This 177-nucleotide RNA was probed chemically with DMS. The RNA was probed in 150 mM KOAc, 10 mM MgCl2 and 150 mM bicine (pH 8.5) at 24 C.

RNA sequence: GGGAACGACUCGAGUAGAGUCGAAAAAAAAAGAUAUGGAGCUUCUACCCACCGAGUCCCAUGCGUUGAAAGCUUAUCGGAAACGAUAAGCUGGAGCAUGGUCUCGAGGAAGCUCCUAAGUCAAAAAUCGUACUGAUAACUUCGGUUAUCAGUACGAAAAAGAAACAACAACAACAAC
Reactivity to DMS in 0.01 (KOAc 150mM, MgCl2 10mM, bicine 150mM(pH8.5), 24C), signal-to-noise 1, nucleotides 027 to 126: a030a050a060a150a100g010a010u000a120u010g000g000a020g010c010u000u000c010u000a130c110c000c040a300c110c000g010a000g010u000c300c010c000a000u000g000c010g000u000u030g000a170a110a030g000c000u000u000a000u000c000g000g010a030a030a010c000g000a000u000a010a030g000c000u000g000g000a010g000c000a010u000g000g000u020c000u000c000g010a100g010g000a080a020g020c000u000c000c010u010a000a020g000u030c040a050a050a060a050a120